Annotation: The data come from the RNA Mapping Database (RMDB), library OK2TST. This 177-nucleotide RNA was probed chemically with 2A3 and DMS. The DMS profile rests on 1,086 reads. 2A3 adducts were read by reverse transcription with SuperScript II with manganese. The reactions ran in a buffer of 150 mM KOAc, 10 mM MgCl2 and 150 mM bicine (pH 8.5), at 24 C.
RNA sequence: GGGAACGACUCGAGUAGAGUCGAAAACGCUGGAAGUCUACGUCGGGUAUCUACGCCGCAAGACCGAGGCCGAUGGCGAGCCGCGGCUGAUCCACACUGUGCGCGGAGUGGGUUACGUGCUACGUGACCACGCUCCGACGUUCGCGUCGGAGCGUGGAAAAGAAACAACAACAACAAC
Reactivity to 2A3 in 0.01 (KOAc 150mM, MgCl2 10mM, bicine 150mM(pH8.5), 24C), signal-to-noise 1, nucleotides 027 to 126: c070g000c020u020g040g060a110a020g050u020c060u150a070c000g090u050c030g050g000g000u050a170u150c020u040a050c120g050c000c010g020c100a020a020g010a050c000c110g020a040g020g000c010c000g060a050u150g040g060c040g050a050g010c000c000g040c000g010g000c050u070g070a070u030c000c010a020c030a000c040u060g000u060g090c030g000c040g070g010a020g010u030g020g000g000u010u000a020c040g050u060g290c090u130a040c010g030u030g050a020
Reactivity to DMS in 0.01 (KOAc 150mM, MgCl2 10mM, bicine 150mM(pH8.5), 24C), signal-to-noise 1, nucleotides 027 to 126: c040g040c070u000g000g010a130a080g060u000c000u000a060c150g000u000c000g000g000g020u000a040u000c080u020a080c090g010c020c010g030c060a120a110g000a070c040c040g010a110g020g000c020c090g020a090u010g040g000c040g000a100g020c000c020g020c050g000g000c040u000g000a080u010c030c060a070c100a090c040u000g040u000g000c120g020c010g000g000a040g030u000g000g010g000u000u000a030c030g010u000g010c120u000a040c030g030u000g000a060